[RMDB]
RNA sequence: GGGAACGACUCGAGUAGAGUCGAAAAGGUCUCCAUGUGGCGCAGGUCACGGAGCUGGCCCAGCCGGACACCUGGCUGGACGCGGGCGCACAGGUCUUCUUCUCCUUCUCCCUGGCCUUCGGGGGCCCCCUUUCUGACGAUUCGUCGUCAGAAAGGGAAAAGAAACAACAACAACAAC
Reactivity to 2A3 in 0.01 (KOAc 150mM, MgCl2 10mM, bicine 150mM(pH8.5), 24C), signal-to-noise 1, nucleotides 027 to 126: g060g000u040c020u060c000c040a140u230g040u100g050g060c160g000c180a050g020g030u030c010a000c070g050g020a020g030c050u040g050g000c020c030c020a000g010c040c020g050g020a060c060a080c160c030u040g040g000c020u040g000g010a010c060g030c010g090g000g000c060g020c030a070c040a130g020g110u030c040u140u040c020u190u000c030u090c030c000u100u050c020u060c020c030c000u000g020g000c040c000u080u040c100g110g050g000g040g020c010c020
Reactivity to DMS in 0.01 (KOAc 150mM, MgCl2 10mM, bicine 150mM(pH8.5), 24C), signal-to-noise 1, nucleotides 027 to 126: g000g020u000c010u000c020c010a180u020g040u010g000g010c040g030c230a080g010g000u000c080a080c200g000g000a040g000c110u010g000g040c050c010c020a070g000c030c010g010g020a240c260a110c190c020u000g020g000c010u010g000g020a040c060g020c110g010g020g010c040g000c140a090c200a070g000g000u010c040u000u000c040u000u000c040u000c020c040u000u000c070u000c040c010c020u000g000g010c000c040u000u000c110g000g000g000g000g000c010c010

The record gives the reactivity of an RNA of 177 nucleotides to 2A3 and DMS.
Conditions: 150 mM KOAc, 10 mM MgCl2 and 150 mM bicine (pH 8.5), 24 C.
For DMS the reverse transcriptase was MarathonRT.